[RMDB]
RNA sequence: GGGAACGACUCGAGUAGAGUCGAAAACAUGGUUGACAAACUGGCUGCCAAGGCCGGUCUUGCGGGAGCGAUCGAAUCAGCCGGCACAACUCAUCAAAUGAUCACGGAUUUGAGCUGUAUUGCGUGCGACACACCGGUCGUUCAGCGGGAUCGAGAAAGUAAUUUAAUGAUUCGUCAUUAAAUUACUAAAAGAAACAACAACAACAAC
Reactivity to 2A3 in 0.01 (KOAc 150mM, MgCl2 10mM, bicine 150mM(pH8.5), 24C), signal-to-noise 4, nucleotides 027 to 156: c030a060u100g040g000u030u060g050a050c040a020a160a020c090u050g050g000c010u030g040c090c030a110a090g050g000c020c000g010g000u010c010u000u020g000c030g070g210g020a010g000c000g010a020u010c000g010a020a030u090c020a040g000c020c000g060g000c050a000c010a010a010c000u030c020a030u030c030a080a090a170u210g110a100u170c070a030c180g090g020a090u040u040u120g010a020g000c030u020g020u080a140u080u180g080c060g040u140g040c010g110a040c020a000c020a040c110c000g010g000u000c000g000u010u000c000a010g000c010g010g000g010a010u020c020g010a010g060a140a140
Reactivity to DMS in 0.01 (KOAc 150mM, MgCl2 10mM, bicine 150mM(pH8.5), 24C), signal-to-noise 2, nucleotides 027 to 156: c090a080u000g020g020u000u000g000a210c060a070a030a090c060u010g010g050c000u000g000c030c130a130a170g030g020c060c010g010g000u010c020u010u010g000c010g000g030g030a040g000c040g010a020u000c020g030a080a110u000c170a140g040c000c010g030g030c010a070c010a020a040c010u000c040a100u000c030a060a100a050u010g000a100u000c050a200c130g020g010a110u000u000u010g020a010g040c080u000g000u000a080u000u010g030c020g040u000g010c000g000a060c030a140c020a170c110c000g020g020u000c010g010u000u000c010a100g010c030g010g000g000a010u020c020g000a140g010a110a100